[RMDB]
RNA sequence: GGGAACGACUCGAGUAGAGUCGAAAAGAUAUGGACCCAUCGGUUAGCCGAAGAACUCGGAAACGAGGGAGGCUUGCCGAGUGGGUCCUAAGUCAAAGUUUCGGAGGUCUUCGGACCUCCGAAACAAUCUAGUAAACUAGUUCGCUAGUUUACUAGAAAAAGAAACAACAACAACAAC
Reactivity to 2A3 in 0.01 (KOAc 150mM, MgCl2 10mM, bicine 150mM(pH8.5), 24C), signal-to-noise 2, nucleotides 027 to 126: g010a050u100a050u170g000g000a000c000c000c000a020u020c010g000g000u030u040a000g020c020c020g150a300a080g020a050a030c000u000c010g020g030a070a060a050c000g000a010g020g000g000a010g000g030c010u000u040g060c010c000g030a010g100u130g000g000g000u000c000c000u010a020a000g010u010c020a120a080a030g020u010u010u000c000g010g010a000g020g010u020c060u150u210c300g090g000a000c000c000u040c000c000g000a000a000a000c000a000a000
Reactivity to DMS in 0.01 (KOAc 150mM, MgCl2 10mM, bicine 150mM(pH8.5), 24C), signal-to-noise 4, nucleotides 027 to 126: g000a060u000a300u000g000g010a010c000c000c000a060u000c000g010g010u000u000a010g020c000c010g000a100a150g020a140a150c000u000c000g000g000a150a090a210c010g000a010g000g010g000a100g010g010c000u000u000g010c000c000g010a020g020u010g010g000g000u000c000c000u000a010a060g010u010c030a130a130a170g010u000u000u010c000g010g010a030g000g000u000c000u000u000c210g020g000a010c000c010u000c000c000g000a000a000a000c000a070a080

Conditions: 150 mM KOAc, 10 mM MgCl2 and 150 mM bicine (pH 8.5), 24 C.
An RNA of 177 nucleotides, treated with 2A3 and DMS and read out base by base.
Values cover nucleotides 27 to 126.
For DMS, 4,810 sequencing reads were counted.
Reactivities are rounded to 0.1 and cut off at 0 and 3.